Conditions: 150 mM KOAc, 10 mM MgCl2 and 150 mM bicine (pH 8.5), 24 C. An RNA of 207 nucleotides, treated with 2A3 and DMS and read out base by base. Source: RMDB library OK3TST, as collected in RNAgym. DMS adducts were read by reverse transcription with MarathonRT. For 2A3, 767 sequencing reads were counted.
RNA sequence: GGGAACGACUCGAGUAGAGUCGAAAAGUUAAAAAAUCUUGAUAGAAGAGCGAAUAUCUCGUCUGACUUAAUGAGUCGUAGUUCAGCAGCAACAUAAGUCAUAACUGUAAAUAGAACAUACUUUCCUGUAGUGUUGAUUCUAGACUCCACAUCAACAACUUAGGGACUUUUUCGAAAGUCCCUAAGUAAAAGAAACAACAACAACAAC
Reactivity to 2A3 in 0.01 (KOAc 150mM, MgCl2 10mM, bicine 150mM(pH8.5), 24C), signal-to-noise 2, nucleotides 027 to 156: g010u020u000a050a100a000a000a030a060u060c020u040u110g040a050u090a100g080a130a030g000a050g020c010g030a120a010u070a100u180c040u020c070g070u010c070u040g040a050c010u060u100a070a080u120g020a000g010u000c010g050u070a050g000u030u010c000a030g030c010a010g110c010a000a050c010a120u170a120a020g050u060c010a050u050a300a020c020u050g010u130a070a090a030u100a070g030a050a000c010a020u100a050c010u020u060u110c020c030u040g020u060a060g030u020g000u020u030g000a040u110u010c020u000a060g020a050c020u010c000c040a080c010a110u090c000a010a050c000a010
Reactivity to DMS in 0.01 (KOAc 150mM, MgCl2 10mM, bicine 150mM(pH8.5), 24C), signal-to-noise 2, nucleotides 027 to 156: g010u000u000a000a050a120a110a080a050u010c070u000u000g030a200u000a140g020a020a050g000a040g020c050g010a110a120u020a130u000c000u000c070g010u020c040u000g020a050c030u000u010a080a150u010g000a150g010u010c000g010u000a120g020u000u010c030a300g030c080a040g010c010a070a060c080a100u000a020a090g000u000c050a070u000a050a070c040u010g000u010a010a020a090u000a080g000a040a050c030a070u010a080c080u000u010u010c040c060u000g010u000a020g020u000g010u010u000g010a090u000u000c050u000a150g010a020c040u000c020c040a060c090a090u000c020a010a040c040a080